[RMDB]
RNA sequence: GGGAACGACUCGAGUAGAGUCGAAAAGCUGUGACCAAGUGCUCUGAAUGUACCUCUGCCCAUCAUGGCCGUUUCAUUUCUGAGGCUGGAAUGAAGCUUUGCAAUGCUGUCCAGUCCAGCGGAUAGAAUCAGGCAGGUUUCACAUGCUGGUCCAGCACUAAUGCAGGACUUUCGAGUCCUGCAUUAGAAAAGAAACAACAACAACAAC
Reactivity to 2A3 in 0.01 (KOAc 150mM, MgCl2 10mM, bicine 150mM(pH8.5), 24C), signal-to-noise 5, nucleotides 027 to 156: g010c030u040g100u200g040a000c010c010a120a100g050u040g080c040u030c050u150g090a100a060u120g040u140a060c020c020u120c060u060g040c030c030c010a130u140c050a080u130g150g010c040c000g000u030u110u200c070a120u050u140u050c040u030g030a050g060g010c000u010g000g060a020a040u200g080a070a010g000c000u060u050u110g110c090a080a140u200g000c010u020g020u010c000c010a000g000u000c000c000a020g010c030g010g010a050u080a210g090a110a090u080c060a040g010g000c000a020g000g020u010u100u070c040a030c000a010u140g040c000u010g010g010u000c000c000a000g020c000a000
Reactivity to DMS in 0.01 (KOAc 150mM, MgCl2 10mM, bicine 150mM(pH8.5), 24C), signal-to-noise 3, nucleotides 027 to 156: g030c010u010g010u010g000a050c030c030a040a100g030u000g010c060u000c050u000g000a120a100u010g020u000a080c060c050u000c050u010g010c020c020c040a190u000c110a110u000g010g030c010c050g010u000u010u010c050a140u000u010u000c050u000g020a280g010g000c020u010g030g000a030a060u010g010a050a040g020c020u020u000u010g050c140a140a090u000g030c010u000g000u000c030c020a050g020u000c020c010a070g010c080g000g010a160u010a100g010a080a040u010c080a040g020g020c050a060g020g000u000u000u010c030a070c000a070u010g000c070u000g020g010u000c020c010a020g040c040a190